[RMDB]
The record gives the reactivity of an RNA of 177 nucleotides to 2A3 and DMS. For DMS the reverse transcriptase was MarathonRT. The RNA was probed in 150 mM KOAc, 10 mM MgCl2 and 150 mM bicine (pH 8.5) at 24 C.
RNA sequence: GGGAACGACUCGAGUAGAGUCGAAAAGCCUGUGGGUUCGCCCACAGGCAAAGAAAGCUGACACGCGGAGCACGCAAUGAAGCGAAAAGCGUGAAAAGAAAAAAAGCGGUUACUUCGGUAACCGCAACUUCCAUACUAUGUUCGCAUAGUAUGGAAGAAAAGAAACAACAACAACAAC
Reactivity to 2A3 in 0.01 (KOAc 150mM, MgCl2 10mM, bicine 150mM(pH8.5), 24C), signal-to-noise 2, nucleotides 027 to 126: g010c010c010u010g000u020g020g000g040u060u120c250g050c040c010c010a000c000a010g000g020c000a010a000a000g000a010a000a010g080c050u070g040a020c010a000c040g000c010g020g030a040g060c070a050c080g020c000a000a260u300g110a300a020g010c000g030a060a060a010a010g000c010g000u000g020a040a000a030a050g040a040a130a000a010a000a000a000g000c000g000g000u000u000a010c000u020u060c180g040g000u000a000a020c000c000g000c010a000a010
Reactivity to DMS in 0.01 (KOAc 150mM, MgCl2 10mM, bicine 150mM(pH8.5), 24C), signal-to-noise 2, nucleotides 027 to 126: g000c010c010u000g050u000g010g020g050u000u020c260g020c000c000c000a000c000a000g030g020c020a000a030a100g000a110a120a100g000c030u010g000a150c040a000c050g010c000g000g010a150g010c070a070c020g000c030a130a060u010g000a180a120g010c020g000a040a120a030a140g030c000g050u000g000a070a090a060a110g020a030a010a050a100a030a080a110g010c000g000g010u020u000a020c010u010u000c090g030g000u000a010a010c000c010g020c010a000a030